[RMDB]
RNA sequence: GGGAACGACUCGAGUAGAGUCGAAAAACGCCACGGUAGUUACGACUACCGUGGCGAUACUCAGUACAACCAUUAACUGUUGUACGAUUAAUGUGAUUACACUUGUGUGAUCAAAGAAAGGGUAGAACCGGUAUGCAAUGUUCGCAUUGCAUACCGGAAAAGAAACAACAACAACAAC
Reactivity to DMS in 0.01 (KOAc 150mM, MgCl2 10mM, bicine 150mM(pH8.5), 24C), signal-to-noise 1, nucleotides 027 to 126: a130c050g020c000c010a000c000g020g000u000a040g000u000u000a090c250g000a050c000u000a010c010c000g040u000g020g000c010g000a000u000a030c000u010c040a090g020u010a000c010a000a000c020c160a270u000u010a100a100c300u000g060u000u020g000u010a040c030g000a130u020u010a090a060u010g000u010g010a000u000u000a000c010a010c110u080u000g000u000g030u020g000a030u000c000a050a040a100g000a030a080a030g030g020g020u000a000g030a120a280
Reactivity to 2A3 in 0.01 (KOAc 150mM, MgCl2 10mM, bicine 150mM(pH8.5), 24C), signal-to-noise 2, nucleotides 027 to 126: a000c000g000c030c000a000c000g000g000u020a010g020u000u030a070c190g030a010c080u000a000c050c000g050u000g010g000c000g000a000u000a000c000u000c040a040g000u000a000c000a000a000c000c030a040u300u200a130a040c090u120g000u010u000g000u000a000c010g000a040u090u140a090a110u180g100u100g070a000u010u020a070c100a000c010u180u030g060u030g020u000g200a030u000c010a070a010a070g130a110a020a000g090g070g020u060a080g040a150a120